[RMDB]
RNA sequence: GGGAACGACUCGAGUAGAGUCGAAAAUUUAAGAGCGUAGAUGUCUCUGUCACGAUACGAGUAAGUGACUCUCGUGUACUACUGACGAAUGAGACAGAGACAUUAAUGCUCAGUGUCAGUCAAGGAAAACUUUAAUGCUAUUCGUAGCAUUAAAGUUAAAAGAAACAACAACAACAAC
Reactivity to 2A3 in 0.01 (KOAc 150mM, MgCl2 10mM, bicine 150mM(pH8.5), 24C), signal-to-noise 9, nucleotides 027 to 126: u120u130u080a160a030g000a000g000c010g010u040a040g020a050u000g000u000c000u010c000u010g000u010c000a010c090g040a020u040a080c010g000a010g020u050a160a100g040u090g220a050c000u020c010u020c080g100u110g020u060a060c040u010a010c010u050g150a090c040g080a120a080u130g030a040g010a070c000a000g000a000g000a000c000a000u000u010a010a010u020g000c000u000c010a000g000u020g080u060c080a080g040u040c050a050a090g090g030a150a170
Reactivity to DMS in 0.01 (KOAc 150mM, MgCl2 10mM, bicine 150mM(pH8.5), 24C), signal-to-noise 9, nucleotides 027 to 126: u010u010u010a110a120g000a020g010c000g010u000a270g010a010u000g000u000c000u010c000u000g010u000c000a080c080g010a090u000a060c020g010a070g010u000a030a080g010u000g010a080c080u000c160u010c170g000u010g010u000a030c040u000a060c030u000g000a130c060g010a110a060u010g010a100g010a010c000a010g000a020g010a010c000a010u000u000a050a080u010g000c000u000c000a080g010u000g010u000c070a070g000u000c100a080a100g000g010a090a070